Structure probing data (2A3 and DMS) for a 177-nucleotide construct. High 2A3 reactivity points to a flexible backbone, as in loops and unpaired stretches. For 2A3 the reverse transcriptase was SuperScript II with manganese. The reactions ran in a buffer of 150 mM KOAc, 10 mM MgCl2 and 150 mM bicine (pH 8.5), at 24 C.

RNA sequence: GGGAACGACUCGAGUAGAGUCGAAAAACACUGCUUGACACAUAUUGCGAGAAGCACCUCGCAUUUGCGGGUUCUCUUAAGCAAAAUACUUGCAUUAGGUCCCAGCUGGGCUGUGCAUCAGGCAGUUUUAUAUCGAAUUGUUCGCAAUUCGAUAUAAAAAAGAAACAACAACAACAAC
Reactivity to 2A3 in 0.01 (KOAc 150mM, MgCl2 10mM, bicine 150mM(pH8.5), 24C), signal-to-noise 9, nucleotides 027 to 126: a000c040a010c000u000g010c000u000u010g010a010c000a000c000a030u060a080u170u070g000c010g000a010g030a140a040g070c040a060c020c010u050c010g010c010a050u090u030u150g000c010g020g040g000u240u020c140u010c000u050u060a060a010g000c000a010a010a050a070u260a160c080u020u020g000c000a170u030u090a020g000g030u050c010c000c020a070g020c040u130g020g130g000c060u020g000u010g010c030a100u000c000a000g010g000c000a000g000u000u000
Reactivity to DMS in 0.01 (KOAc 150mM, MgCl2 10mM, bicine 150mM(pH8.5), 24C), signal-to-noise 8, nucleotides 027 to 126: a090c090a140c000u000g000c000u010u000g000a020c080a030c050a050u010a090u010u000g010c000g010a040g010a130a130g020c260a110c120c000u020c010g010c000a100u010u010u010g010c010g000g000g000u010u000c030u020c030u000u010a050a090g010c020a010a020a130a110u040a090c180u010u010g010c010a050u010u010a050g000g010u010c010c000c030a150g020c060u010g000g010g010c160u000g020u000g000c080a100u010c000a000g000g000c000a010g000u000u000